[RMDB]
An RNA of 177 nucleotides, treated with DMS and read out base by base. The RNA was probed in 150 mM KOAc, 10 mM MgCl2 and 150 mM bicine (pH 8.5) at 24 C. It was measured as part of the RMDB library TTRDES. For DMS the reverse transcriptase was MarathonRT.
RNA sequence: GGGAACGACUCGAGUAGAGUCGAAAAGAUAUGGACGAGCCCAUGGAGCCACACGUCGGAAACGACGUGAAUGGCUAUGAAGUGGAGCUCGUCCUAAGUCAAACAUGGGGACUUCGGUCCCCAUGAAGAAAAUGUACCUGUUCGCAGGUACAUUUUCAAAAGAAACAACAACAACAAC
Reactivity to DMS in 0.01 (KOAc 150mM, MgCl2 10mM, bicine 150mM(pH8.5), 24C), signal-to-noise 3, nucleotides 027 to 126: g000a070u010a300u000g000g000a010c000g010a010g010c010c000c000a010u000g020g000a020g020c000c010a110c010a000c000g000u010c010g000g010a080a090a250c000g020a010c000g010u010g000a070a130u000g030g040c020u000a120u010g010a120a300g000u000g000g000a140g010c000u000c000g010u000c000c000u000a010a080g010u000c010a140a120a300c010a000u000g000g000g010g000a010c000u000u020c250g030g000u000c000c000c000c000a000u000g000a060a080